Structure probing data (2A3 and DMS) for a 177-nucleotide construct. 2A3 adducts were read by reverse transcription with SuperScript II with manganese. The reactions ran in a buffer of 150 mM KOAc, 10 mM MgCl2 and 150 mM bicine (pH 8.5), at 24 C.
RNA sequence: GGGAACGACUCGAGUAGAGUCGAAAAACUAGGAGCGCACAUCUCUCUAAGACUGUACGACAGUCUGUCUCUCUAGCACGCUUGUUCAACGAGAGACAGAGAGCGUUGGAACAAGUGUGCAACGAAAGAAUAGAUGCAAGUUCGCUUGCAUCUAUUCAAAAGAAACAACAACAACAAC
Reactivity to 2A3 in 0.01 (KOAc 150mM, MgCl2 10mM, bicine 150mM(pH8.5), 24C), signal-to-noise 7, nucleotides 027 to 126: a000c070u060a040g020g030a020g020c040g040c050a020c020a200u070c030u000c000u000c010u050a050a020g010a010c010u030g090u140a060c070g070a040c100a000g010u000c010u030g030u010c080u010c000u010c030u040a020g000c000a000c010g010c020u010u020g010u010u010c010a010a010c010g010a010g010a040g050a230c040a120g100a010g010a030g020c010g000u010u040g170g010a020a010c000a010a000g010u010g010u000g010c010a010a010c050g070a010a020a050
Reactivity to DMS in 0.01 (KOAc 150mM, MgCl2 10mM, bicine 150mM(pH8.5), 24C), signal-to-noise 7, nucleotides 027 to 126: a130c140u000a080g010g000a070g010c070g010c090a060c090a090u000c040u010c020u010c040u000a090a100g000a030c010u010g000u000a080c120g000a300c300a010g010u000c010u000g000u010c040u000c010u000c030u000a260g000c010a010c010g010c020u000u010g010u000u000c010a030a020c050g010a040g010a150g000a110c150a050g000a070g010a080g000c040g010u000u000g020g010a030a020c010a010a020g010u000g020u000g010c020a040a030c200g000a050a070a090